Conditions: 150 mM KOAc, 10 mM MgCl2 and 150 mM bicine (pH 8.5), 24 C. This 177-nucleotide RNA was probed chemically with 2A3 and DMS. It was measured as part of the RMDB library TTRDEL. Values cover nucleotides 27 to 126. For 2A3, 4,882 sequencing reads were counted. DMS adducts were read by reverse transcription with MarathonRT.
RNA sequence: GGGAACGACUCGAGUAGAGUCGAAAAGAUAUGGAUGGUUACGACAUGCUCCGUCGGAAACGACUGGAGCAACAGCGUACCAUCCUAAGUCAAAAGCGAGAUAGCGCGUUCGCGCGCUAUCUCGCAACAUAAAUAUGAACUUCGGUUCAUAUUUAUGAAAAGAAACAACAACAACAAC
Reactivity to 2A3 in 0.01 (KOAc 150mM, MgCl2 10mM, bicine 150mM(pH8.5), 24C), signal-to-noise 2, nucleotides 027 to 126: g020a020u020a010u080g000g010a000u010g050g020u300u200a020c070g130a110c190a230u080g000c010u000c010c000g000u000c020g000g040a070a030a000c010g030a010c130u300g040g000a010g000c030a000a020c020a000g000c000g010u000a000c000c000a000u000c000c000u010a000a000g000u000c020a020a020a060a140g030c010g000a010g020a020u010a030g000c020g000c040g010u110u120c280g010c000g010c020g000c140u000a000u000c000u000c010g000c000a000a000
Reactivity to DMS in 0.01 (KOAc 150mM, MgCl2 10mM, bicine 150mM(pH8.5), 24C), signal-to-noise 2, nucleotides 027 to 126: g000a040u010a200u000g010g010a010u000g000g000u010u000a010c000g000a050c160a230u000g010c000u000c000c000g000u000c000g030g000a030a050a120c000g020a020c010u010g070g000a020g020c000a000a020c270a110g020c020g010u010a030c000c010a010u000c000c000u010a000a040g000u010c030a100a070a150a180g030c010g030a010g020a010u020a000g000c000g010c000g010u000u010c210g020c020g000c000g000c010u000a010u000c010u000c000g010c000a020a040